[RMDB]
RNA sequence: GGGAACGACUCGAGUAGAGUCGAAAACAUCAAUAGUUACACAAGGUUUCUAGUUUUUAAUUGUGUAAAGGGCCAAAAUCUCCUUGAUCACUUCGCUCCGUACAAUGUCAUCGUCGGUAAAGUUCAUGUGGAAGAUAGACUCGGAAUUGGAGUACAACCUGAGUAUGCACUUCGGUGCAUACUCAGGAAAAGAAACAACAACAACAAC
Reactivity to 2A3 in 0.01 (KOAc 150mM, MgCl2 10mM, bicine 150mM(pH8.5), 24C), signal-to-noise 1, nucleotides 027 to 156: c020a000u270c090a000a110u140a170g090u030u080a010c010a000c000a030a070g050g000u040u080u010c010u020a040g010u010u010u000u050u300a070a110u020u020g010u000g000u030a000a040a020g060g010g040c020c020a000a180a050a050u020c020u020c000c020u040u000g050a060u090c040a010c030u040u020c100g000c020u020c010c010g030u050a020c050a090a210u160g060u080c060a090u120c100g100u000c150g010g050u150a060a050a070g040u130u050c020a030u110g010u050g130g000a040a000g020a010u120a070g020a010c010u010c090g020g040a090a030u040u110g010g000a000g030u040a070c050a020a000